[RMDB]
RNA sequence: GGGAACGACUCGAGUAGAGUCGAAAACGUGGAAUGCCGAUUCCAGAUUUUGAUUUAGACGAUUUUAUUGACGCACCAUGCUAUUGCUUUAACGCUGAGGGUGAUGCAUCCUGGUCUUCUACUAUGAACGGACCUUCGUUCGCGAAGGUCAAAAGAAACAACAACAACAAC
Reactivity to DMS in 0.01 (KOAc 150mM, MgCl2 10mM, bicine 150mM(pH8.5), 24C), signal-to-noise 8, nucleotides 027 to 129: c060g000u040g010g000a060a050u020g000c060c100g040a160u020u010c030c020a150g010a160u010u010u010u010g020a090u010u000u000a000g030a030c100g010a100u070u000u020u050a100u040u030g000a080c040g000c020a020c060c020a010u000g020c000u010a110u010u010g020c060u000u000u000a090a070c190g020c030u000g020a110g010g040g030u000g010a080u030g000c000a090u030c020c140u000g020g030u020c000u000u000c030u040a090c120u040a050u040g020a060a060c120g000
Reactivity to 2A3 in 0.01 (KOAc 150mM, MgCl2 10mM, bicine 150mM(pH8.5), 24C), signal-to-noise 9, nucleotides 027 to 129: c030g040u040g030g020a040a030u060g070c070c050g040a060u030u000c020c010a000g010a070u050u060u070u150g110a110u010u070u170a050g020a080c090g010a060u050u060u070u110a190u060u190g020a040c030g010c030a000c000c020a030u090g010c010u080a080u150u140g000c040u100u100u230a100a030c120g000c010u020g030a050g030g050g000u010g030a020u030g020c020a030u040c000c020u030g020g000u000c010u030u000c000u010a110c020u030a060u220g100a100a030c030g040